[RMDB]
RNA sequence: GGGAACGACUCGAGUAGAGUCGAAAAGAUAUGGAGCGGUACCUGGCGAAGAACUUCGUCGGAAACGACGAAGGGAGCCAUGUACACGCUCCUAAGUCAAAUCCACAGUGGUUCGCCACUGUGGAAAGAGAACAUUAGAGUUCGCUCUAAUGUUCUCAAAAGAAACAACAACAACAAC
Reactivity to DMS in 0.01 (KOAc 150mM, MgCl2 10mM, bicine 150mM(pH8.5), 24C), signal-to-noise 5, nucleotides 027 to 126: g010a040u000a300u010g000g000a010g030c010g020g020u000a000c000c070u000g000g010c000g000a100a180g000a130a220c010u000u000c000g020u000c000g010g000a090a090a180c010g010a020c000g000a010a010g000g010g000a050g000c000c010a010u000g000u000a010c000a120c020g020c010u000c000c000u000a000a090g010u010c030a100a160a150u000c010c000a010c010a010g020u000g010g000u000u010c300g020c010c000a000c000u000g020u000g000g000a000a020a090
Reactivity to 2A3 in 0.01 (KOAc 150mM, MgCl2 10mM, bicine 150mM(pH8.5), 24C), signal-to-noise 5, nucleotides 027 to 126: g020a000u090a040u200g000g000a000g000c000g020g000u000a010c020c050u000g010g020c030g220a300a030g000a050a030c000u010u010c010g010u000c010g000g020a070a060a030c000g000a000c000g000a000a000g000g010g000a000g010c000c010a010u010g010u000a000c070a050c010g010c000u000c000c000u000a030a000g000u000c020a030a020a150u020c000c000a010c000a010g010u020g080g050u080u140c300g090c110c000a000c000u000g000u010g000g000a000a000a000
An RNA of 177 nucleotides, treated with DMS and 2A3 and read out base by base. For 2A3 the reverse transcriptase was SuperScript II with manganese. Source: RMDB library TTRDES, as collected in RNAgym. DMS adducts were read by reverse transcription with MarathonRT. For DMS, 9,017 sequencing reads were counted.